[RMDB]
RNA sequence: GGGAACGACUCGAGUAGAGUCGAAAAAGAUAAAUGCAGGGACACGGUUAGCCGCUGGGCAGAACUUUGUUCCCAGUUCACAACUCUUCGAAGACGAAUGAUCCCCGCACUUCGAGAAGCUAUGGGACUUAAUCAGGAUGUUCGCAUCCUGAUUAAGAAAAGAAACAACAACAACAAC
Reactivity to 2A3 in 0.01 (KOAc 150mM, MgCl2 10mM, bicine 150mM(pH8.5), 24C), signal-to-noise 9, nucleotides 027 to 126: a010g120a030u210a040a110a020u190g040c080a070g000g030g000a010c020a010c060g070g000u050u080a030g010c010c030g080c170u140g050g060g000c030a040g060a090a030c020u040u020u110g010u090u040c000c010c000a010g010u020u030c050a080c050a300a300c080u020c020u090u060c020g050a080a070g100a290c080g030a100a120u120g050a110u070c020c010c000c000g010c010a050c010u020u030c010g020a030g010a050a010g010c050u110a060u060g020g020g020a010
Reactivity to DMS in 0.01 (KOAc 150mM, MgCl2 10mM, bicine 150mM(pH8.5), 24C), signal-to-noise 7, nucleotides 027 to 126: a080g010a140u040a050a060a080u010g010c070a130g000g000g000a080c040a050c070g000g010u000u020a130g010c050c030g010c140u020g010g000g020c040a080g010a050a070c030u010u010u010g000u000u000c000c000c020a080g010u010u000c030a080c130a100a140c050u000c020u010u010c000g000a040a030g010a130c070g010a080a060u020g000a120u010c020c010c010c060g000c070a080c020u000u000c020g000a040g000a060a040g010c070u010a080u020g010g010g010a140
The record gives the reactivity of an RNA of 177 nucleotides to 2A3 and DMS.
For DMS the reverse transcriptase was MarathonRT.
2A3 adducts were read by reverse transcription with SuperScript II with manganese.
The reactions ran in a buffer of 150 mM KOAc, 10 mM MgCl2 and 150 mM bicine (pH 8.5), at 24 C.
The DMS profile rests on 18,102 reads.